[RMDB]
RNA sequence: GGGAACGACUCGAGUAGAGUCGAAAAAUCGAACGCAACAACAAGGUAAUGCCUGCAAAUUGUUUGAAGUCAAGAGCUAGGUAUAUUUUUGAAGUCAAGUAAAUGUUAAGAAGGGCCAUCUUAGCUGAGAGUUUCUUCCUUAAUGAAAGACAGCAAAUCUGAGACAUACUUUCGAGUAUGUCUCAGAAAAAGAAACAACAACAACAAC
Reactivity to 2A3 in 0.01 (KOAc 150mM, MgCl2 10mM, bicine 150mM(pH8.5), 24C), signal-to-noise 2, nucleotides 027 to 156: a010u100c040g020a040a030c050g020c060a040a040c010a050a010c010a060a000g010g010u060a110a040u060g030c000c010u040g000c030a060a090a170u070u100g040u080u100u210g050a050a000g040u070c030a030a060g010a020g070c030u070a010g030g050u030a070u000a070u130u120u060u110u120g050a020a010g010u030c030a030a010g010u030a050a080a110u110g020u040u030a040a010g010a030a040g050g000g010c000c020a020u010c080u000u100a020g000c080u020g020a000g000a000g040u030u030u020c000u010u010c000c010u050u080a020a020u080g040a050a000a000g040a020c040a020g020c060a040a040a080
Reactivity to DMS in 0.01 (KOAc 150mM, MgCl2 10mM, bicine 150mM(pH8.5), 24C), signal-to-noise 2, nucleotides 027 to 156: a100u030c080g010a090a150c100g010c080a050a110c040a050a110c090a060a020g000g030u000a080a110u000g000c020c040u000g000c040a060a060a150u000u010g000u000u000u020g010a120a060g050u010c050a040a090g000a150g040c060u000a010g010g020u000a060u000a040u000u000u000u000u000g010a090a080g010u000c030a030a100g020u000a020a020a080u010g010u000u000a030a070g020a100a050g030g010g020c030c010a080u000c040u000u000a110g030c020u000g000a120g040a120g000u000u000u000c010u020u000c000c010u010u000a060a070u000g020a100a040a070g000a040c030a070g030c030a040a000a260